[RMDB]
RNA sequence: GGGAACGACUCGAGUAGAGUCGAAAAUGAUGUUGCGCAGGAAUGGCGUCUGGUCAUGCCGGCUCAGGUCGAGCUGGACGGGAGCCAGAUCGCGACCGCCCGAAAGUUCCUUGCAGAUCAGCAGGCCUCAUCAUCGAGUUUUCGAACUCGAUGAUGAAAAAGAAACAACAACAACAAC
Reactivity to 2A3 in 0.01 (KOAc 150mM, MgCl2 10mM, bicine 150mM(pH8.5), 24C), signal-to-noise 1, nucleotides 027 to 126: u050g010a020u070g000u290u080g070c020g050c070a010g010g100a090a030u100g100g000c010g000u000c000u020g030g020u020c040a030u060g010c040c000g000g030c000u010c010a110g100g300u240c080g000a010g020c000u010g060g020a170c000g020g010g020a010g020c000c010a000g000a020u070c030g010c020g030a040c000c030g030c000c020c030g020a050a040a000g010u020u000c000c010u010u050g050c020a010g040a140u080c010a000g080c020a020g040g140c020c020
Reactivity to DMS in 0.01 (KOAc 150mM, MgCl2 10mM, bicine 150mM(pH8.5), 24C), signal-to-noise 3, nucleotides 027 to 126: u010g010a070u010g000u010u000g000c100g000c090a030g020g010a070a040u010g010g020c000g000u000c020u000g010g000u010c040a230u010g010c040c010g000g020c010u000c010a130g010g020u010c210g010a030g000c010u000g000g000a040c060g010g000g010a230g000c010c020a010g000a010u000c050g000c020g010a060c090c110g000c020c030c100g000a060a080a120g000u000u010c000c020u000u000g020c040a070g010a040u000c040a060g010c080a090g010g010c080c080
Description
Chemical mapping of a 177-nucleotide RNA with 2A3 and DMS. For DMS, 3,237 sequencing reads were counted. The reactions ran in a buffer of 150 mM KOAc, 10 mM MgCl2 and 150 mM bicine (pH 8.5), at 24 C. Values cover nucleotides 27 to 126. It was measured as part of the RMDB library OK2TST.